[RMDB]
RNA sequence: GGGAACGACUCGAGUAGAGUCGAAAAAACUUCAUUGUUGCAGUCAACACACAAAGGAGUAGACAGAAGACGAUUUGGUUAAUUUUUGGGUGGCGCCAGACGCACAGCUGGUUGCCGUGGCCUCGGCACGAUAAGUUUUUUUCGAAAAACUUAUCGUAAAAGAAACAACAACAACAAC
Reactivity to DMS in 0.01 (KOAc 150mM, MgCl2 10mM, bicine 150mM(pH8.5), 24C), signal-to-noise 8, nucleotides 027 to 126: a050a030c040u010u000c040a110u010u000g000u000u000g020c100a120g010u000c080a070a050c080a080c080a080c090a040a060a080g010g010a060g020u000a080g000a080c070a060g010a100a100g010a060c080g010a070u000u010u000g010g010u000u000a050a080u010u000u000u000u010g000g010g020u010g010g020c030g010c020c010a030g010a070c080g000c120a050c170a100g000c020u000g000g010u000u010g050c010c010g020u000g020g010c030c020u000c090g010g010c130
Reactivity to 2A3 in 0.01 (KOAc 150mM, MgCl2 10mM, bicine 150mM(pH8.5), 24C), signal-to-noise 5, nucleotides 027 to 126: a010a010c060u090u040c040a070u060u050g050u050u060g010c030a010g050u050c040a050a030c010a020c000a010c040a110a120a090g070g010a050g010u010a020g030a010c010a040g120a100a020g030a040c050g030a060u050u020u070g050g000u040u040a110a100u140u080u100u180u130g090g000g020u080g000g020c010g000c000c000a020g030a060c050g030c060a080c020a100g020c010u020g010g000u050u250g010c010c000g020u020g050g020c020c010u010c020g030g010c030